[RMDB]
RNA sequence: GGGAACGACUCGAGUAGAGUCGAAAAGGUAGGCGUUGAUCGCCGGGCCGUAGAAAUUCUUGAAAUAGUCGCGACAUUCGUCCGGGCAACCGAACCGGUCCACUGUCAGCGAUCCUCGCCGGGUACGUAUGGUGUCGCAUUUCGAUGCGACACCAUAAAAAGAAACAACAACAACAAC
Reactivity to DMS in 0.01 (KOAc 150mM, MgCl2 10mM, bicine 150mM(pH8.5), 24C), signal-to-noise 1, nucleotides 027 to 126: g000g020u020a150g000g010c000g030u000u000g020a010u000c010g010c010c090g060g020g000c000c000g030u000a050g010a100a100a060u000u000c060u010u000g000a070a110a170u000a110g000u000c030g000c140g000a020c100a220u000u000c130g010u000c020c000g010g000g010c160a050a050c140c070g000a060a060c050c000g020g000u000c010c010a110c240u000g000u000c150a120g000c000g000a040u000c050c040u010c010g010c010c020g000g010g000u000a010c080g000
Source: RMDB library OK2TST, as collected in RNAgym. The record gives the reactivity of an RNA of 177 nucleotides to DMS. DMS adducts were read by reverse transcription with MarathonRT.